[RMDB]
RNA sequence: GGGAACGACUCGAGUAGAGUCGAAAAUGCAUGUCCUCUCAGCAGUGAUGACAGGUGAUCUAGUAGUGCAUGCAUCCUCUCAACACUGAUGGCAGGUGAUCUAGUUAUUGACUCUCUCCUGCUGGACUCGGUUCCGGACGUUCGCGUCCGGAACCGAAAAAGAAACAACAACAACAAC
Reactivity to 2A3 in 0.01 (KOAc 150mM, MgCl2 10mM, bicine 150mM(pH8.5), 24C), signal-to-noise 1, nucleotides 027 to 126: u150g000c000a000u000g100u060c000c000u000c000u090c000a040g000c020a020g040u150g070a040u020g080a100c100a010g020g020u120g000a000u030c110u000a060g050u020a010g020u130g050c020a000u120g040c070a100u120c000c000u000c010u000c020a040a040c070a080c240u170g070a110u100g000g000c010a000g000g000u050g110a120u160c080u190a050g070u130u020a170u120u300g040a000c000u000c000u000c000u000c020c000u000g000c000u000g000g000a080c000
The record gives the reactivity of an RNA of 177 nucleotides to 2A3. 2A3 adducts were read by reverse transcription with SuperScript II with manganese. Reactivities are given for positions 27 through 126. It was measured as part of the RMDB library OK1LIB. The RNA was probed in 150 mM KOAc, 10 mM MgCl2 and 150 mM bicine (pH 8.5) at 24 C.